[RMDB]
RNA sequence: GGGAACGACUCGAGUAGAGUCGAAAACGAAACACAGUGAGUGGACGGAAGAAAUCCCCUUCCCACCUCCCCACUGUCCACUCACUGUCUUCCUAAUAGGAAAUAUAAAUCGGGGGUGGGAAGGGGAAGGUGGGACUGAUUUCGAUCAGUCCCACCUAAAAGAAACAACAACAACAAC
Reactivity to 2A3 in 0.01 (KOAc 150mM, MgCl2 10mM, bicine 150mM(pH8.5), 24C), signal-to-noise 1, nucleotides 027 to 126: c110g050a050a030a000c080a000c000a010g000u000g000a000g000u040g000g000a000c000g020g030a000a000g080a160a200a050u030c000c000c000c000u000u000c000c000c000a000c000c000u030c100c090c000c020a040c000u040g000u000c010c020a000c050u000c000a000c030u000g000u000c000u010u100c010c000u120a180a160u300a220g090g190a000a070a000u230a020u080a020a080a190u180c020g000g000g000g000g000u010g030g000g010a000a000g000g000g000g000a000
An RNA of 177 nucleotides, treated with 2A3 and read out base by base. The reactions ran in a buffer of 150 mM KOAc, 10 mM MgCl2 and 150 mM bicine (pH 8.5), at 24 C.